[RMDB]
RNA sequence: GGGAACGACUCGAGUAGAGUCGAAAAGAUAUGGAUGGAACUACGUCCAAUCAUAAGCGAAGAACUCGGAAACGAGGGAGCUUAUGGAGACGCCAUCCUAAGUCAUACCACUGGUUCGCCAGUGGAAUCCAGUUUAGGAGUUCGCUCCUAAACUGGAAAAAGAAACAACAACAACAAC
Reactivity to DMS in 0.01 (KOAc 150mM, MgCl2 10mM, bicine 150mM(pH8.5), 24C), signal-to-noise 1, nucleotides 027 to 126: g000a010u000a300u000g000g000a000u000g000g000a150a050c070u010a300c000g010u000c000c070a060a220u000c010a000u000a000a000g000c000g000a130a060g000a170a120c000u000c000g010g010a080a070a190c000g030a020g000g000g000a090g010c000u000u010a000u000g010g000a050g010a030c010g030c030c000a010u000c000c000u000a010a110g000u000c030a110u000a140c000c000a000c010u000g000g000u000u010c300g040c000c000a020g000u000g000g010a040a090
Reactivity to 2A3 in 0.01 (KOAc 150mM, MgCl2 10mM, bicine 150mM(pH8.5), 24C), signal-to-noise 2, nucleotides 027 to 126: g030a000u070a030u160g000g010a000u000g020g020a120a080c140u170a040c300g000u020c000c040a120a030u140c030a000u000a000a020g000c000g170a300a040g030a180a110c000u000c000g010g070a090a060a040c000g000a010g030g010g000a020g000c000u020u010a010u030g030g020a140g000a020c010g000c040c000a000u030c010c000u000a080a000g040u000c020a030u120a260c010c000a000c010u000g030g000u110u060c300g100c100c010a010g010u000g000g000a000a030